[RMDB]
RNA sequence: GGGAACGACUCGAGUAGAGUCGAAAAGAUAUGGACACCAGUAGACAUGCUCGACUCGGAAACGAGUCACGCGAGCAACAGCUACGGUGUCCUAAGUCAAAGUUCCUGAGGUUCGCCUCAGGAACAAGACAAGGUUUUGGUUCGCCAAAACCUUGUCAAAAGAAACAACAACAACAAC
Reactivity to DMS in 0.01 (KOAc 150mM, MgCl2 10mM, bicine 150mM(pH8.5), 24C), signal-to-noise 2, nucleotides 027 to 126: g010a030u000a150u010g000g000a000c000a000c000c000a190g050u000a020g000a050c070a080u000g020c000u020c000g000a020c000u000c000g000g000a020a030a060c000g000a040g000u000c010a070c090g100c300g010a010g020c000a140a150c110a090g000c000u010a010c000g010g000u000g000u000c000c000u000a000a020g010u000c000a100a090a140g010u000u000c000c000u020g000a040g010g020u000u000c230g000c000c000u000c020a000g000g000a000a000c000a050a080
Reactivity to 2A3 in 0.01 (KOAc 150mM, MgCl2 10mM, bicine 150mM(pH8.5), 24C), signal-to-noise 2, nucleotides 027 to 126: g030a000u050a010u050g000g000a000c010a020c030c130a040g040u010a010g060a150c190a300u170g000c010u000c040g000a000c010u000c000g000g040a020a030a010c000g000a000g000u030c040a020c080g200c090g020a000g010c010a070a170c070a150g060c010u010a000c000g010g000u000g000u030c000c000u000a000a000g010u000c010a140a080a000g000u000u000c000c010u000g000a010g030g040u030u210c300g080c090c000u000c000a010g010g000a000a010c000a000a000